An RNA of 177 nucleotides, treated with DMS and 2A3 and read out base by base. It was measured as part of the RMDB library OK1LIB.
RNA sequence: GGGAACGACUCGAGUAGAGUCGAAAAGCUCUAGGAGACUAGAGCAAUACGUACGAGCGAUCGUGUCACUGAACUCAGAUAGCCAGUUCAGAGGCUAUCAAAGGACAUAGCUAUAGCUAUGUCCAAAGACCAUUCUAACCUUCGGGUUAGAAUGGUCAAAAGAAACAACAACAACAAC
Reactivity to DMS in 0.01 (KOAc 150mM, MgCl2 10mM, bicine 150mM(pH8.5), 24C), signal-to-noise 1, nucleotides 027 to 126: g000c000u000c000u010a000g000g030a130g010a110c000u000a000g020a000g010c000a090a050u060a090c050g000u010a020c030g000a020g010c170g040a070u000c000g000u000g000u030c070a070c110u000g010a090a010c050u000c100a050g020a020u000a000g000c020c000a020g000u030u040c070a010g000a190g000g000c000u000a000u000c000a080a170a030g020g000a020c000a000u000a000g060c000u030a130u020a110g020c000u000a000u000g000u000c000c010a000a020a120
Reactivity to 2A3 in 0.01 (KOAc 150mM, MgCl2 10mM, bicine 150mM(pH8.5), 24C), signal-to-noise 3, nucleotides 027 to 126: g000c000u010c000u000a020g020g070a130g050a090c000u000a000g000a000g010c010a000a020u040a040c020g060u030a040c010g000a030g020c030g020a040u040c000g030u070g060u100c020a060c090u080g070a060a020c040u040c060a010g010a020u020a000g070c020c010a060g000u120u060c030a070g080a060g150g000c000u000a010u000c000a030a000a010g010g000a000c000a010u000a000g000c000u130a030u070a300g010c000u010a000u020g000u010c000c000a000a000a000